[RMDB]
Background
Conditions: 150 mM KOAc, 10 mM MgCl2 and 150 mM bicine (pH 8.5), 24 C. Chemical mapping of a 177-nucleotide RNA with 2A3 and DMS.
RNA sequence: GGGAACGACUCGAGUAGAGUCGAAAAGAUAUGGAUGGGCACGACGAUCUAACGUAACAUCCACUCGGAAACGAGUGGUGGUUAGGGAGUGCAGUCCUAAGUCAAAAGUCGUGGUUCGCCACGACAACUAAUGUAGACGGUUCGCCGUCUACAUUAGAAAAGAAACAACAACAACAAC
Reactivity to 2A3 in 0.01 (KOAc 150mM, MgCl2 10mM, bicine 150mM(pH8.5), 24C), signal-to-noise 7, nucleotides 027 to 126: g030a020u090a030u170g020g020a030u050g060g300g000c020a020c050g300a120c030g000a110u010c000u010a020a000c010g030u030a020a010c030a240u050c000c000a000c000u010c000g030g010a070a060a050c010g000a000g000u010g000g000u010g000g000u000u010a010g000g000g010a020g010u010g000c000a000g000u000c000c000u040a140a030g060u030c040a040a040a080a110g010u000c010g000u010g010g050u050u090c290g050c070c000a000c000g000a010c000a000a000
Reactivity to DMS in 0.01 (KOAc 150mM, MgCl2 10mM, bicine 150mM(pH8.5), 24C), signal-to-noise 9, nucleotides 027 to 126: g010a050u000a300u000g000g010a000u000g010g010g020c000a010c010g000a090c260g000a030u010c000u000a010a010c010g020u000a020a020c200a030u000c000c000a000c000u000c000g000g000a090a090a160c010g010a010g010u000g010g020u000g010g000u000u000a010g000g000g000a050g030u000g000c000a300g000u000c000c000u010a060a150g000u000c040a080a090a100a100g010u000c000g020u000g000g010u000u010c280g010c000c000a000c000g010a010c010a030a090

For 2A3, 32,180 sequencing reads were counted. The data come from the RNA Mapping Database (RMDB), library TTRDEL.